[RMDB]
Conditions: 150 mM KOAc, 10 mM MgCl2 and 150 mM bicine (pH 8.5), 24 C.
Chemical mapping of a 177-nucleotide RNA with DMS and 2A3.
It was measured as part of the RMDB library RFM100.
RNA sequence: GGGAACGACUCGAGUAGAGUCGAAAACUGCAACGGCCUGCGAGCUCCCCAUCCGACCCGUCUUGAAACACGGACCAAGGAGUCUGACAUGCGUGCGAGUCGACGGGUUCUGAAACCUGGGAUGCGCGAGCCCGUUGUGGUUCGCCACAACGGGCUCAAAAGAAACAACAACAACAAC
Reactivity to DMS in 0.01 (KOAc 150mM, MgCl2 10mM, bicine 150mM(pH8.5), 24C), signal-to-noise 1, nucleotides 027 to 126: c070u010g000c180a040a070c060g020g000c040c040u040g000c000g000a090g070c040u000c000c090c030c220a100u020c050c130g000a070c010c000c000g000u000c010u040u000g000a140a290a150c120a040c040g000g020a000c040c010a170a070g020g000a180g060u000c000u000g040a040c300a130u020g030c000g000u000g000c000g000a120g030u010c060g040a020c010g000g070g000u020u020c100u040g030a060a090a140c080c140u000g000g000g040a000u050g000c060g100c040
Reactivity to 2A3 in 0.01 (KOAc 150mM, MgCl2 10mM, bicine 150mM(pH8.5), 24C), signal-to-noise 2, nucleotides 027 to 126: c010u030g010c030a090a050c000g020g010c000c000u070g000c000g010a020g000c030u010c000c000c000c000a050u000c010c040g000a050c000c010c000g010u000c010u020u170g030a020a030a000c040a000c000g020g050a030c000c040a260a180g230g040a150g110u040c010u090g030a030c020a150u160g020c060g000u010g000c010g070a050g030u000c000g000a020c040g000g000g000u010u000c040u010g130a060a000a010c020c010u050g000g000g000a030u060g020c030g000c040
As a SHAPE reagent, 2A3 marks flexible, mostly unpaired nucleotides at the ribose 2'-OH. Values cover nucleotides 27 to 126. The 2A3 profile rests on 1,420 reads.